Structure probing data (DMS) for a 177-nucleotide construct. Reactivities are rounded to 0.1 and cut off at 0 and 3. DMS adducts were read by reverse transcription with MarathonRT. It was measured as part of the RMDB library TTRINS.
RNA sequence: GGGAACGACUCGAGUAGAGUCGAAAAGAUAUGGAUAGCGCGAAACGAUCUCUCACGUUGAAAUUCGCGGGACUCGGAAACGAGUCCCGCGAAUGGAGUGAACGUGAGAUCGGAGCUAUCCUAAGUCCAUAAGGCGAUACUUCGGUAUCGCCUUAUGAAAAGAAACAACAACAACAAC
Reactivity to DMS in 0.01 (KOAc 150mM, MgCl2 10mM, bicine 150mM(pH8.5), 24C), signal-to-noise 1, nucleotides 027 to 126: g030a150u010a300u000g010g000a000u010a000g010c010g040c160g000a040a170a300c050g010a040u000c110u010c030u010c040a010c030g010u020u000g000a300a200a020u010u010c000g050c010g010g000g000a010c010u050c030g000g000a070a120a230c050g020a030g000u010c000c000c000g010c000g010a000a000u010g020g010a220g030u010g010a010a020c030g030u010g010a010g010a010u000c020g000g000a240g010c010u020a010u010c010c000u010a000a100g000u000c070